[RMDB]
RNA sequence: GGGAACGACUCGAGUAGAGUCGAAAAUCUGCACGCAACCCAUGCCGACCAUGUCCGCGCCACCCGCUCAAGCGCCGGUAUGUGGCGCCUUGGCGGCUAGGCCAACCGCCCCCGGCAACGCCAGCUGAACCGCUCAAAUUUUCGAAUUUGAGCGGUUAAAAGAAACAACAACAACAAC
Reactivity to DMS in 0.01 (KOAc 150mM, MgCl2 10mM, bicine 150mM(pH8.5), 24C), signal-to-noise 1, nucleotides 027 to 126: u010c060u000g000c020a030c100g000c090a130a090c030c010c030a150u000g020c010c010g030a170c040c040a070u000g010u000c190c150g000c100g000c010c020a080c130c010c010g020c020u010c170a110a080g000c170g010c110c020g000g000u000a150u020g030u020g000g010c000g000c040c030u000u000g020g020c010g000g020c000u000a070g010g010c030c040a050a050c060c030g000c020c000c010c000c000g030g000c000a050a040c040g000c040c020a070g000c060u000g010